The record gives the reactivity of an RNA of 207 nucleotides to DMS and 2A3. High DMS reactivity at an A or C suggests that its Watson-Crick edge is free.
RNA sequence: GGGAACGACUCGAGUAGAGUCGAAAAGAACACGUCUCGGGACGACGCUAAACUCGCCCUGGUCGGGAUGGGUUUAACGACACCUCGGGUUUCCUAGUUCCUAAAACUAGGUGGUGGAGUCAUAUAAAAAACUUCUACACGUUCGCGUGUAGAAGAAGUAAUUAACGUACUUCGGUACGUUAAUUACAAAAGAAACAACAACAACAAC
Reactivity to DMS in 0.01 (KOAc 150mM, MgCl2 10mM, bicine 150mM(pH8.5), 24C), signal-to-noise 1, nucleotides 027 to 156: g040a080a120c100a060c040g020u000c000u010c000g080g000g040a060c030g040a060c000g000c040u000a050a040a030c050u000c000g020c020c010c030u000g030g020u000c170g030g000g020a040u000g010g020g010u000u000u010a030a090c020g020a110c010a060c050c000u000c020g010g020g010u000u000u000c010c000u010a030g010u010u000c040c120u030a030a030a060a080c020u000a000g000g010u000g010g010u000g000g000a190g000u000c060a150u020a140u050a020a040a100a110a090a130c000u000u010c000u000a000c010a020c020g010u000u000c300g020c010g050u000g000u010a000g010a000a010g020a020a100
Reactivity to 2A3 in 0.01 (KOAc 150mM, MgCl2 10mM, bicine 150mM(pH8.5), 24C), signal-to-noise 4, nucleotides 027 to 156: g060a070a020c070a010c080g060u020c000u020c010g000g020g050a100c230g020a020c010g030c090u010a000a000a040c010u000c000g030c000c000c020u130g100g130u160c130g030g030g030a100u090g040g010g010u020u020u030a060a000c010g050a050c000a050c020c000u030c000g010g000g010u020u030u030c000c010u010a010g000u010u040c030c050u120a050a050a020a010c010u010a030g000g000u030g020g020u040g030g050a100g030u080c060a080u120a020u290a160a090a020a020a010a060c000u000u000c000u010a000c010a010c010g020u030u050c230g010c010g060u000g000u000a000g000a000a010g000a000a010

For 2A3 the reverse transcriptase was SuperScript II with manganese. For DMS the reverse transcriptase was MarathonRT.